[RMDB]
The data come from the RNA Mapping Database (RMDB), library 15KLIB. The record gives the reactivity of an RNA of 170 nucleotides to 2A3 and DMS. Reactivities are given for positions 27 through 129. The DMS profile rests on 19,367 reads. For 2A3 the reverse transcriptase was SuperScript II with manganese. The 2A3 profile rests on 18,999 reads. The RNA was probed in 150 mM KOAc, 10 mM MgCl2 and 150 mM bicine (pH 8.5) at 24 C.
RNA sequence: GGGAACGACUCGAGUAGAGUCGAAAACUUCCAAAAAGACUGAGGGGGGUGGCUAGGACGCAGGGGACCAGUGGAGCCGUGGGAUGCUCUUCCCAAUCUGACCUGACCCCUCCCCCAGCGGGUCGCCAUGCAUGCAGCUUCGGCUGCAUGAAAAGAAACAACAACAACAAC
Reactivity to 2A3 in 0.01 (KOAc 150mM, MgCl2 10mM, bicine 150mM(pH8.5), 24C), signal-to-noise 7, nucleotides 027 to 129: c000u060u050c000c000a030a050a030a060a020g220a080c020u030g010a280g000g000g000g000g000g000u060g000g000c010u010a020g010g000a040c070g020c090a010g000g010g010g010a010c040c080a090g050u110g100g010a020g010c010c050g060u160g020g100g020a050u110g000c000u010c000u050u040c010c010c000a010a070u050c030u030g010a030c000c010u020g100a150c000c000c000c000u020c000c000c000c000c000a000g010c010g000g030g000u000c000g010c010c000a050u130g040
Reactivity to DMS in 0.01 (KOAc 150mM, MgCl2 10mM, bicine 150mM(pH8.5), 24C), signal-to-noise 3, nucleotides 027 to 129: c190u030u040c000c020a090a080a100a140a080g050a100c050u040g000a130g010g030g030g030g020g040u030g000g000c020u020a070g020g000a110c110g020c070a000g000g000g000g000a070c150c100a000g000u050g000g000a050g040c000c060g050u000g000g000g000a160u050g020c020u000c060u020u010c000c000c000a070a270u080c000u020g010a050c040c030u000g030a060c000c000c000c000u000c000c000c000c000c000a040g010c030g020g000g020u030c000g020c040c000a090u070g040